[RMDB]
RNA sequence: GGGAACGACUCGAGUAGAGUCGAAAACUUGACCCCUUAGUGAGCGUGGUCAGCUGCCGCUUACAAUCGGUCUCGAUUAGUUGGCCCGGAAUAAAAGGGGAUCGGCUUAGUCCGUGACACCGAUUCAGUCAUAGCUCGUCUUCGGAUGAGUUAUGACAAAAGAAACAACAACAACAAC
Reactivity to 2A3 in 0.01 (KOAc 150mM, MgCl2 10mM, bicine 150mM(pH8.5), 24C), signal-to-noise 7, nucleotides 027 to 126: c010u040u100g070a030c000c000c000c000u010u040a030g020u010g110a030g080c040g030u200g020g000u020c010a000g010c010u030g000c000c010g020c030u050u120a040c020a020a040u040c000g000g040u000c050u020c050g060a050u060u070a000g010u000u010g010g000c000c000c000g000g020a050a030u100a030a070a010a000g000g000g000g000a000u020c000g000g000c010u020u080a020g020u020c030c030g040u040g010a010c010a010c030c020g020a010u050u040c030a010
Reactivity to DMS in 0.01 (KOAc 150mM, MgCl2 10mM, bicine 150mM(pH8.5), 24C), signal-to-noise 9, nucleotides 027 to 126: c020u010u010g010a090c010c000c030c050u000u000a130g010u010g010a050g010c020g030u040g010g010u010c080a070g030c060u010g010c030c020g010c050u000u020a040c100a120a070u020c130g000g000u000c050u020c110g000a120u030u020a020g010u000u000g000g000c000c000c010g000g010a100a060u030a030a040a070a100g000g000g000g000a040u010c000g010g000c050u030u030a090g010u030c010c040g000u000g000a190c100a120c020c010g000a080u010u010c120a130